Background: Chemical mapping of a 207-nucleotide RNA with DMS and 2A3. The reactions ran in a buffer of 150 mM KOAc, 10 mM MgCl2 and 150 mM bicine (pH 8.5), at 24 C.

RNA sequence: GGGAACGACUCGAGUAGAGUCGAAAAGGAUUAUAGGCGUGAGCCACCGCGCCCAGCUAGUGCUGUUCUUAAGGUUAGUUGUGACUCAGAGUCCUCUUGGGGAAAGCCAGACAAGUUCACAAGUUCCCCUGUGUGUUACCUGGCAGUCCUGCUGGUGUAUCAUAUUAUCGUUCGCGAUAAUAUGAUAAAAAGAAACAACAACAACAAC
Reactivity to DMS in 0.01 (KOAc 150mM, MgCl2 10mM, bicine 150mM(pH8.5), 24C), signal-to-noise 4, nucleotides 027 to 156: g020g000a150u000u000a080u000a050g030g020c020g040u010g000a140g020c060c030a070c050c040g010c040g010c010c000c010a060g000c040u000a110g020u000g020c000u000g010u000u010c070u000u000a100a100g010g010u000u000a090g020u000u010g020u010g020a080c020u000c050a170g010a150g010u000c030c020u000c060u000u000g030g010g020g000a070a080a160g010c010c020a090g010a090c040a040a140g010u000u000c030a050c020a040a080g000u000u000c010c010c000c040u000g020u000g000u000g020u000u010a060c020c010u000g000g010c020a150g000u000c070c030u000g020c020u000g010g000u010g020
Reactivity to 2A3 in 0.01 (KOAc 150mM, MgCl2 10mM, bicine 150mM(pH8.5), 24C), signal-to-noise 3, nucleotides 027 to 156: g030g020a090u130u100a100u260a210g020g000c010g010u020g020a020g050c020c000a020c010c000g010c000g000c000c000c000a000g000c040u160a050g050u070g160c010u030g040u130u060c050u100u170a100a060g040g030u030u050a050g010u050u120g050u050g040a000c010u030c100a050g020a050g120u030c020c010u040c040u080u110g010g000g000g010a010a080a010g030c010c010a020g020a070c060a150a030g060u120u080c030a030c010a110a050g030u020u030c030c000c000c000u030g060u000g000u010g010u060u040a050c000c010u000g000g010c010a010g010u020c010c010u020g030c020u030g000g050u050g040